This 207-nucleotide RNA was probed chemically with 2A3 and DMS. The 2A3 profile rests on 3,044 reads. For DMS, 3,529 sequencing reads were counted. The RNA was probed in 150 mM KOAc, 10 mM MgCl2 and 150 mM bicine (pH 8.5) at 24 C.
[RMDB]
RNA sequence: GGGAACGACUCGAGUAGAGUCGAAAAGGGUUUGAGCCAUCGCCCGAAUACGAUGGCUGAUACAAGUCGUCAUUGUACGCGACGUAGUACGUACUCAUUAGUGCGAAAGCACGGUUAGUCCGACUGGGCAGGGACGAUCUUCUGUCAAUACUUAGAAGAUCAUACCACUGUUCGCAGUGGUAUGAUCAAAAGAAACAACAACAACAAC
Reactivity to 2A3 in 0.01 (KOAc 150mM, MgCl2 10mM, bicine 150mM(pH8.5), 24C), signal-to-noise 4, nucleotides 027 to 156: g070g000g030u100u110u150g080a010g000c000c000a000u000c000g010c020c040c040g060a060a070u120a010c010g000a000u000g000g000c020u010g010a020u030a060c090a080a020g030u040c030g020u020c070a120u060u230g050u100a090c070g000c030g030a020c030g020u000a010g040u010a050c030g000u000a000c000u010c020a040u020u080a160g000u000g010c000g020a090a020a010g010c010a000c000g010g010u020u010a010g010u020c030c010g020a040c030u090g040g000g000c010a020g010g000g020a040c060g050a090u050c020u150u020c030u080g090u040c030a040a060u080a190c070u080u120a060g030a200a020
Reactivity to DMS in 0.01 (KOAc 150mM, MgCl2 10mM, bicine 150mM(pH8.5), 24C), signal-to-noise 2, nucleotides 027 to 156: g020g000g010u010u010u000g010a030g000c020c020a020u000c020g000c000c030c170g030a180a110u010a010c030g000a020u010g010g030c000u020g020a070u000a060c100a090a100g010u000c030g000u000c020a090u010u000g030u000a040c060g010c040g010a100c060g050u000a110g020u000a070c000g060u000a030c040u010c060a100u000u000a080g070u000g000c030g010a080a090a230g010c000a040c000g010g060u010u010a140g030u020c060c060g000a250c060u010g000g010g020c030a120g000g020g010a060c070g000a050u000c050u000u000c040u010g010u000c010a060a130u020a140c060u010u000a130g010a130a150